[RMDB]
RNA sequence: GGGAACGACUCGAGUAGAGUCGAAAAGAGCGAUACGUUUGUCAUCACGUUGCAUCGUCAGCUUCAGGAUGACGAAGCAGAAGUAGACUGUUGCUGUUGAUGCUUCGUGUACUUCUGCGUAUCGCAAGGGAAAUGAUAAGUUCGCUUAUCAUUUCCCAAAAGAAACAACAACAACAAC
Reactivity to DMS in 0.01 (KOAc 150mM, MgCl2 10mM, bicine 150mM(pH8.5), 24C), signal-to-noise 2, nucleotides 027 to 126: g000a120g000c000g020a000u000a020c010g010u010u010u000g000u000c100a100u020c010a030c050g000u000u000g010c000a010u010c040g000u010c060a020g010c020u010u000c010a040g000g000a040u040g000a020c000g000a080a110g010c170a080g020a070a070g000u010a020g000a120c020u010g010u000u000g010c000u000g010u010u030g000a040u000g000c020u000u000c000g030u000g000u000a010c040u010u010c010u000g000c020g000u000a010u010c000g000c010a050a080
Reactivity to 2A3 in 0.01 (KOAc 150mM, MgCl2 10mM, bicine 150mM(pH8.5), 24C), signal-to-noise 4, nucleotides 027 to 126: g080a010g000c000g000a000u000a000c000g010u010u140u170g000u000c010a020u010c000a020c010g000u000u000g000c000a000u010c020g190u070c040a010g000c000u000u000c010a010g010g010a050u060g050a010c000g000a040a030g070c060a020g020a100a010g010u020a000g010a040c000u010g000u010u000g000c010u000g010u080u160g000a000u010g000c010u000u000c000g000u000g010u000a010c000u020u020c000u010g000c000g000u000a000u000c000g000c000a010a010

An RNA of 177 nucleotides, treated with DMS and 2A3 and read out base by base. It was measured as part of the RMDB library OK1LIB. For DMS, 8,072 sequencing reads were counted. Values are in units of 0.01, from 0 to 300, in steps of 10. Conditions: 150 mM KOAc, 10 mM MgCl2 and 150 mM bicine (pH 8.5), 24 C.